Structure probing data (2A3 and DMS) for a 177-nucleotide construct.
Conditions: 150 mM KOAc, 10 mM MgCl2 and 150 mM bicine (pH 8.5), 24 C.
It was measured as part of the RMDB library OK2TST.

RNA sequence: GGGAACGACUCGAGUAGAGUCGAAAAACGCACCAUGAGCAUGUUCGGUUACGCCGCAGUCUUUGCAGCUAACACAAGCAUGAUUCGCAAGAUCACCCAGGCUUAGUCGAAAGGCGGUUAGCCGCCCCAAGUGAACGCAUUUCGAUGCGUUCACUUGAAAAGAAACAACAACAACAAC
Reactivity to 2A3 in 0.01 (KOAc 150mM, MgCl2 10mM, bicine 150mM(pH8.5), 24C), signal-to-noise 3, nucleotides 027 to 126: a000c070g000c020a060c010c020a130u210g040a010g030c030a010u030g020u040u050c040g000g030u020u030a040c150g000c010c020g000c010a000g090u140c140u190u280u080g000c010a000g000c000u030a050a000c170a020c010a260a030g010c000a000u040g050a210u110u050c040g000c040a030a050g010a090u080c030a080c030c020c000a000g040g000c020u070u090a010g020u040c040g080a110a010a060g030g020c020g000g070u040u070a030g020c010c000g000c010c030c000
Reactivity to DMS in 0.01 (KOAc 150mM, MgCl2 10mM, bicine 150mM(pH8.5), 24C), signal-to-noise 3, nucleotides 027 to 126: a090c150g010c060a060c060c040a090u000g000a050g010c020a020u000g010u010u000c170g020g010u000u000a020c170g030c010c020g020c010a020g030u010c130u010u010u000g020c000a030g010c000u000a000a030c020a110c070a040a060g010c010a020u000g000a090u010u000c050g010c130a080a080g000a070u000c080a120c020c020c050a110g020g000c020u000u000a130g020u010c020g010a080a070a150g020g020c010g010g020u010u000a090g030c010c020g000c010c020c070
Annotation
For 2A3 the reverse transcriptase was SuperScript II with manganese.